The record gives the reactivity of an RNA of 207 nucleotides to 2A3.

RNA sequence: GGGAACGACUCGAGUAGAGUCGAAAAGAACCAGGAGAUCAACUUCCAAAAAAGCUUCAACAACCACGUGCGCACGCUGGUGGCGCGCGAGGAGGUGACCAUCGGCCUGAUGCACCUGUGGGACUUUGUGUGCGCGCUGGAGCAGAACCCCAACAGCUAUCAACUCGGUAUUCGUACCGAGUUGAUAAAAAGAAACAACAACAACAAC
Reactivity to 2A3 in 0.01 (KOAc 150mM, MgCl2 10mM, bicine 150mM(pH8.5), 24C), signal-to-noise 1, nucleotides 027 to 156: g010a000a020c040c030a010g040g000a060g000a000u110c120a060a160c050u090u100c000c080a110a090a090a060a060a060g010c020u080u100c050a110a080c000a060a070c050c010a010c010g000u050g000c010g030c020a000c010g000c030u070g060g060u050g040g000c020g020c020g000c000g110a070g110g120a040g000g000u010g070a210c050c020a070u070c020g030g040c010c030u110g000a150u040g050c030a010c010c010u000g020u020g000g040g020a000c030u050u080u030g060u000g000u020g010c000g000c000g000c020u020g010g010a010g000c010a000g060a040a040c000c040c000c000a090a000c080a070g090c030